This 177-nucleotide RNA was probed chemically with DMS and 2A3. The reactions ran in a buffer of 150 mM KOAc, 10 mM MgCl2 and 150 mM bicine (pH 8.5), at 24 C.
RNA sequence: GGGAACGACUCGAGUAGAGUCGAAAAGUUAGAUCUCAAGAAUUACAUAAAUAACCAAUUAUUACCCAUAGUAAAUCAACAGAGCUGUCGCAUCUCCAACAUUGAAACAGUUAUAGAAUUCCAGCAGCGAUGAAUUAUACUUCGGUAUAAUUCAUCGAAAAGAAACAACAACAACAAC
Reactivity to DMS in 0.01 (KOAc 150mM, MgCl2 10mM, bicine 150mM(pH8.5), 24C), signal-to-noise 3, nucleotides 027 to 126: g000u010u000a100g000a110u000c030u010c050a130a160g010a110a080u000u000a060c030a060u010a050a080a140u000a060a090c030c030a050a110u010u010a080u010u010a120c050c010c020a150u000a080g020u000a020a080a080u010c040a040a070c120a090g030a110g030c030u000g000u000c070g000c110a040u000c000u000c020c040a030a120c070a100u000u000g010a040a070a040c100a060g000u000u000a080u000a060g000a090a160u020u000c020c020a060g030c170a090g000
Reactivity to 2A3 in 0.01 (KOAc 150mM, MgCl2 10mM, bicine 150mM(pH8.5), 24C), signal-to-noise 3, nucleotides 027 to 126: g030u030u050a070g020a140u000c030u030c070a020a140g090a170a160u180u140a080c040a060u270a140a210a070u130a040a030c000c010a050a040u110u050a080u060u050a130c000c000c030a050u080a060g060u120a050a100a150u070c000a030a040c000a030g040a020g050c030u000g050u080c030g000c070a050u010c010u000c030c010a030a040c000a070u000u060g020a050a030a050c020a050g000u000u030a060u040a090g130a070a050u090u040c030c020a020g070c030a000g080